Description
The data come from the RNA Mapping Database (RMDB), library OK1LIB. Chemical mapping of a 177-nucleotide RNA with DMS and 2A3. 2A3 adducts were read by reverse transcription with SuperScript II with manganese. High DMS reactivity at an A or C suggests that its Watson-Crick edge is free. Reactivities are given for positions 27 through 126. For DMS the reverse transcriptase was MarathonRT. Conditions: 150 mM KOAc, 10 mM MgCl2 and 150 mM bicine (pH 8.5), 24 C.
RNA sequence: GGGAACGACUCGAGUAGAGUCGAAAAACAUGGGUUGAUCUGGUACUGGAAGGCGAUAGUUGUGUGACCAUAAUGUCAAAAGACAAGCCAACCAUUGAUGUCAAAAUGAUGAACAUGGAAGCAGCCACAUGACCUUAUGUUUCGACAUAAGGUCAUGAAAAGAAACAACAACAACAAC
Reactivity to DMS in 0.01 (KOAc 150mM, MgCl2 10mM, bicine 150mM(pH8.5), 24C), signal-to-noise 6, nucleotides 027 to 126: a070c120a040u020g000g000g000u020u010g010a070u000c040u000g000g010u000a040c080u000g010g000a050a160g000g010c040g010a120u010a090g000u000u000g010u000g010u010g000a110c020c150a070u030a120a050u040g000u000c010a050a070a080a170g010a030c040a020a200g010c020c020a080a250c020c040a040u010u000g000a070u020g000u000c030a060a050a090a080u030g010a040u010g010a070a060c090a030u000g000g020a110a130g000c060a060g010c030c060a200
Reactivity to 2A3 in 0.01 (KOAc 150mM, MgCl2 10mM, bicine 150mM(pH8.5), 24C), signal-to-noise 7, nucleotides 027 to 126: a000c050a050u120g010g000g070u040u030g050a100u030c020u080g040g100u160a090c020u020g040g040a070a060g050g000c020g060a110u100a120g060u040u070g100u070g060u040g090a020c000c020a110u130a200a090u240g010u000c030a090a070a030a020g030a020c010a020a030g010c000c000a010a020c020c010a010u020u130g080a080u060g040u040c040a060a040a030a120u130g050a020u090g010a020a050c040a030u030g020g000a050a050g020c030a010g010c000c010a030